[RMDB]
RNA sequence: GGGAACGACUCGAGUAGAGUCGAAAAGUAUCCCUAGAUGAUAAAACACCGCACAUGGCUCGUAAGAGCGGUUAAAUUAGGAAGUAAUGCAAAUUACGCGAGGUAACGCAUGGCCUAGGCUCGUUAGAAAAGGGAGAAUCCUUCGGGAUUCUCCCAACGAGGUGUAAUAGUUCGCUAUUACACCUCGAAAAGAAACAACAACAACAAC
Reactivity to DMS in 0.01 (KOAc 150mM, MgCl2 10mM, bicine 150mM(pH8.5), 24C), signal-to-noise 1, nucleotides 027 to 156: g010u000a110u000c000c010c000u040a030g000a090u000g010a160u000a050a110a130a140c050a070c020c000g070c070a090c020a090u000g020g010c010u030c040g010u000a120a080g000a060g020c000g040g000u000u000a100a020a130u000u000a100g000g000a030a100g030u000a080a080u000g000c130a060a050a090u020u010a020c040g010c040g000a160g020g030u000a070a050c110g000c100a050u000g000g040c000c050u000a070g010g040c030u000c090g040u000u010a140g000a000a060a180a200g010g010g030a020g030a000a000u000c000c010u000u000c300g040g000g010a010u000u000c000u000c000c000c010a020a000
Reactivity to 2A3 in 0.01 (KOAc 150mM, MgCl2 10mM, bicine 150mM(pH8.5), 24C), signal-to-noise 2, nucleotides 027 to 156: g050u050a150u080c020c000c010u010a060g070a200u140g070a070u110a150a110a000a040c010a050c010c000g080c030a010c030a080u070g060g000c020u030c090g060u070a090a040g040a030g080c050g000g000u080u090a050a110a110u110u080a050g080g000a070a070g060u070a100a030u070g030c060a020a040a140u150u040a090c040g040c130g030a020g070g050u040a060a000c020g020c100a060u080g020g000c000c000u010a010g060g030c000u000c020g070u050u020a020g170a130a250a050a070g000g000g000a000g000a010a000u010c000c000u010u030c120g010g030g000a000u000u000c000u020c010c010c010a010a000